[RMDB]
RNA sequence: GGGAACGACUCGAGUAGAGUCGAAAAUCUUUCUCUAGACGUCACUUCUAGUUGGGACUAUCCUAUUUGGGGUACUCCAUACUGUGCAUAUUUGAUCGCGACGUACGUCCACCCCCUCCACCACCACAAGAACUUACAUGUUCGCAUGUAAGUUCUUAAAAGAAACAACAACAACAAC
Reactivity to 2A3 in 0.01 (KOAc 150mM, MgCl2 10mM, bicine 150mM(pH8.5), 24C), signal-to-noise 2, nucleotides 027 to 126: u050c000u010u180u000c040u000c000u060a060g040a040c020g020u050c030a030c060u040u030c040u060a040g010u010u050g060g000g000a000c010u050a020u040c010c020u110a300u280u140u270g060g010g000g000u000a030c040u000c020c020a010u050a100c050u050g000u080g130c100a030u070a100u230u150u180g170a140u120c020g000c010g050a000c020g010u070a020c020g060u010c010c000a030c030c000c110c010c000u050c000c030a040c000c010a040c010c020a110c020
Reactivity to DMS in 0.01 (KOAc 150mM, MgCl2 10mM, bicine 150mM(pH8.5), 24C), signal-to-noise 3, nucleotides 027 to 126: u010c130u000u000u010c010u000c030u000a100g000a110c080g010u000c050a060c110u000u000c040u000a020g000u000u000g010g020g000a050c180u000a020u000c000c000u000a230u010u030u000g040g020g000g020u000a020c110u000c020c020a080u010a040c080u000g030u010g020c120a120u000a100u010u010u000g010a050u010c120g010c060g010a070c110g020u000a060c060g010u010c020c050a210c040c000c000c010c030u000c000c010a120c080c070a070c100c120a050c200